[RMDB]
RNA sequence: GGGAACGACUCGAGUAGAGUCGAAAACGAGGAGGUGGAGAUCCCAUGCCGACCCGAAGAGGAAAGGAGGACACGGACGACAAACCGUAAGUUCUACUGCCCUUUAUUGUUGGGUGCACCCUGGGACAAACUGGGAAGUUCGCUUCCCAGAAAAGAAACAACAACAACAAC
Reactivity to DMS in 0.01 (KOAc 150mM, MgCl2 10mM, bicine 150mM(pH8.5), 24C), signal-to-noise 9, nucleotides 027 to 129: c100g000a030g000g000a010g020g020u010g030g020a040g000a030u000c110c050c010a110u050g000c030c030g000a080c070c040c070g040a070a060g020a000g020g020a020a110a030g040g010a050g000g000a030c050a040c060g000g020a020c030g010a090c280a080a130a090c040c030g000u030a060a100g000u020u020c030u020a080c080u020g020c150c010c020u020u020u020a090u060u020g030u000u010g010g010g000u000g030c070a080c000c010c020u000g060g000g000a070c100a040a070a140
Reactivity to 2A3 in 0.01 (KOAc 150mM, MgCl2 10mM, bicine 150mM(pH8.5), 24C), signal-to-noise 9, nucleotides 027 to 129: c050g010a050g020g000a020g040g020u070g020g010a090g000a090u070c010c000c010a030u090g020c010c030g050a050c010c000c010g030a040a020g020a020g010g000a030a030a010g030g010a000g010g000a000c020a000c030g020g020a040c030g020a030c120a040a110a020c020c010g070u070a080a050g010u030u010c010u040a100c040u030g020c010c000c010u050u090u070a190u090u140g100u040u070g010g000g000u030g000c010a060c000c000c020u030g010g000g010a030c030a020a100a030